An RNA of 177 nucleotides, treated with DMS and 2A3 and read out base by base. The reactions ran in a buffer of 150 mM KOAc, 10 mM MgCl2 and 150 mM bicine (pH 8.5), at 24 C. For 2A3 the reverse transcriptase was SuperScript II with manganese. DMS adducts were read by reverse transcription with MarathonRT. The 2A3 profile rests on 1,305 reads. The data come from the RNA Mapping Database (RMDB), library M2PK90.
RNA sequence: GGGAACGACUCGAGUAGAGUCGAAAAGCUCAGUGUGUGUCGCCCCGUCCUCUAGUGCUGGUUCUAGGGCUGGGGCGUCAGCAUCCAGGUCUGACGGGACGGGCAGUAUCUCGCCAUCAACGAUAAAGUUCUUGUGUUCUUUCGAGAACACAAGAACAAAAGAAACAACAACAACAAC
Reactivity to DMS in 0.01 (KOAc 150mM, MgCl2 10mM, bicine 150mM(pH8.5), 24C), signal-to-noise 1, nucleotides 027 to 126: g010c020u000c030a100g000u000g010u010g020u010g010u010c020g010c000c000c000c000g000u000c060c020u010c050u000a010g010u000g020c110u010g010g010u010u000c000u000a000g020g000g020c050u000g000g000g010g010c000g000u000c010a070g000c020a050u000c070c070a090g010g000u010c010u000g010a070c070g020g010g020a080c060g000g000g000c050a060g000u000a030u000c050u010c040g000c060c040a040u010c130a060a060c090g000a080u020a060a090a100
Reactivity to 2A3 in 0.01 (KOAc 150mM, MgCl2 10mM, bicine 150mM(pH8.5), 24C), signal-to-noise 1, nucleotides 027 to 126: g030c020u020c070a040g010u040g000u030g020u000g020u150c000g020c000c000c000c000g090u070c020c070u260c030u030a030g000u080g160c070u210g150g050u160u020c000u030a010g000g000g080c050u080g000g000g000g000c000g000u010c000a000g010c000a030u030c000c030a020g050g080u020c040u030g060a040c050g040g000g000a010c040g000g020g010c010a020g010u050a020u080c030u030c040g000c070c000a160u150c090a080a070c050g010a020u120a140a110a000